An RNA of 177 nucleotides, treated with DMS and 2A3 and read out base by base. Values cover nucleotides 27 to 126. The RNA was probed in 150 mM KOAc, 10 mM MgCl2 and 150 mM bicine (pH 8.5) at 24 C.
RNA sequence: GGGAACGACUCGAGUAGAGUCGAAAACGAUAUCAACCCGCCUGUUGUGAAGAACAAUACCCAGGAGUUCACCGUGACCCUGGAGUUUACGGUGGCGAGGGCAUAACCUAUGGCACUGAUCUACGACCUAAUAUCGAGGCUUCGGCCUCGAUAUUAGAAAAGAAACAACAACAACAAC
Reactivity to DMS in 0.01 (KOAc 150mM, MgCl2 10mM, bicine 150mM(pH8.5), 24C), signal-to-noise 2, nucleotides 027 to 126: c100g020a130u000a060u000c100a080a150c070c060c080g000c120c070u010g020u000u000g000u010g010a070a100g030a090a080c110a070a090u000a090c020c030c000a100g010g020a140g060u000u000c000a060c040c060g010u000g000a040c010c020c040u000g040g000a070g010u000u000u000a000c020g020g050u000g000g000c000g000a100g010g040g010c090a030u000a050a080c080c100u000a070u000g020g010c050a040c040u000g050a060u000c070u000a110c110g020a190c160
Reactivity to 2A3 in 0.01 (KOAc 150mM, MgCl2 10mM, bicine 150mM(pH8.5), 24C), signal-to-noise 1, nucleotides 027 to 126: c030g000a010u060a000u120c020a010a090c010c030c050g000c010c080u040g000u080u080g080u030g020a090a100g060a090a000c040a100a040u040a060c020c000c000a020g010g050a160g080u000u100c030a020c090c060g010u050g010a010c000c000c160u130g070g150a090g000u030u030u060a000c000g010g020u010g000g000c050g010a080g000g000g000c030a040u050a040a030c000c000u060a060u090g000g050c000a030c050u050g060a050u010c060u070a030c030g080a050c010